[RMDB]
RNA sequence: GGGAACGACUCGAGUAGAGUCGAAAAAUACGAAGAAGCUGGGAGUGUAGUACCUUUUCACAAAAGGUGUUGCACUUUUUUAAGACUAGUAGAGGUUGGUGGGUCCAAUCUUGGUCUGCUGGGAGUGUCAGUAUUACGCCUUCGGGCGUAAUACUGAAAAAGAAACAACAACAACAAC
Reactivity to 2A3 in 0.01 (KOAc 150mM, MgCl2 10mM, bicine 150mM(pH8.5), 24C), signal-to-noise 1, nucleotides 027 to 126: a010u150a030c000g010a010a110g080a000a060g030c040u050g080g000g000a030g000u000g000u040a000g000u000a000c010c030u030u000u000u140c170a090c160a100a060a000a000g000g000u010g000u000u000g000c030a000c000u000u000u000u000u000u030a020a020g000a000c010u000a000g150u020a010g050a000g100g040u030u020g030g020u090g050g290g000u010c020c000a000a000u000c000u000u150g070g000u000c020u000g000c000u040g060g000g000a030g030u050g110
Reactivity to DMS in 0.01 (KOAc 150mM, MgCl2 10mM, bicine 150mM(pH8.5), 24C), signal-to-noise 3, nucleotides 027 to 126: a090u020a100c020g000a130a130g030a110a060g000c030u000g010g030g010a000g010u010g020u010a000g020u000a010c000c000u010u000u000u010c300a130c300a120a010a010a010g000g030u000g000u000u000g010c000a010c020u010u000u000u030u030u070a140a060g000a010c010u000a110g040u050a090g020a060g000g000u000u000g010g010u000g010g010g000u030c030c020a010a020u010c010u000u010g000g000u000c030u020g020c020u000g000g000g000a120g010u020g000
An RNA of 177 nucleotides, treated with 2A3 and DMS and read out base by base. For DMS, 4,996 sequencing reads were counted. Values cover nucleotides 27 to 126. 2A3 is a SHAPE reagent: it acylates the 2'-hydroxyl of flexible nucleotides of all four kinds. Source: RMDB library OK1LIB, as collected in RNAgym. For 2A3 the reverse transcriptase was SuperScript II with manganese. The reactions ran in a buffer of 150 mM KOAc, 10 mM MgCl2 and 150 mM bicine (pH 8.5), at 24 C.